Description
Chemical mapping of a 177-nucleotide RNA with DMS and 2A3. It was measured as part of the RMDB library OK2TST. Reactivities are given for positions 27 through 126. The 2A3 profile rests on 5,685 reads. The reactions ran in a buffer of 150 mM KOAc, 10 mM MgCl2 and 150 mM bicine (pH 8.5), at 24 C. High DMS reactivity at an A or C suggests that its Watson-Crick edge is free.
[RMDB]
RNA sequence: GGGAACGACUCGAGUAGAGUCGAAAAAGGGAGGGAGUGUGGCUUUGGGAUGGGUAGCAAUAAAGAGGUAAGGCUUAGCUACCUCCUGGCAGGUUAUAUUAGGCCUCCCCUCCUGUGCCACCCUAACUGCUUCUGUUAAAUUCGUUUAACAGAAGCAAAAAGAAACAACAACAACAAC
Reactivity to DMS in 0.01 (KOAc 150mM, MgCl2 10mM, bicine 150mM(pH8.5), 24C), signal-to-noise 4, nucleotides 027 to 126: a110g030g020g010a070g020g010g010a080g040u010g010u000g010g030c000u000u010u000g010g020g000a080u010g020g010g020u000a030g010c040a090a090u010a070a060a050g000a030g000g010u010a090a060g000g000c020u000u000a100g000c090u000a030c000c000u000c010c030u000g020g010c200a030g000g010u000u010a100u020a150u010u000a090g010g010c010c020u000c040c080c000c010u000c010c020u000g010u010g010c060c070a090c030c050c010u000a060a110c240
Reactivity to 2A3 in 0.01 (KOAc 150mM, MgCl2 10mM, bicine 150mM(pH8.5), 24C), signal-to-noise 4, nucleotides 027 to 126: a020g040g020g020a060g020g010g010a070g040u180g020u050g050g020c030u100u140u120g040g010g030a100u150g070g020g030u030a010g010c010a020a110u120a240a120a020g040a020g040g070u100a080a030g170g000c020u010u010a010g000c010u010a020c000c000u000c010c020u040g060g000c060a030g030g030u130u110a120u010a070u210u140a050g010g010c000c000u000c010c000c000c000u000c010c010u040g020u040g030c020c010a030c010c000c010u080a090a080c040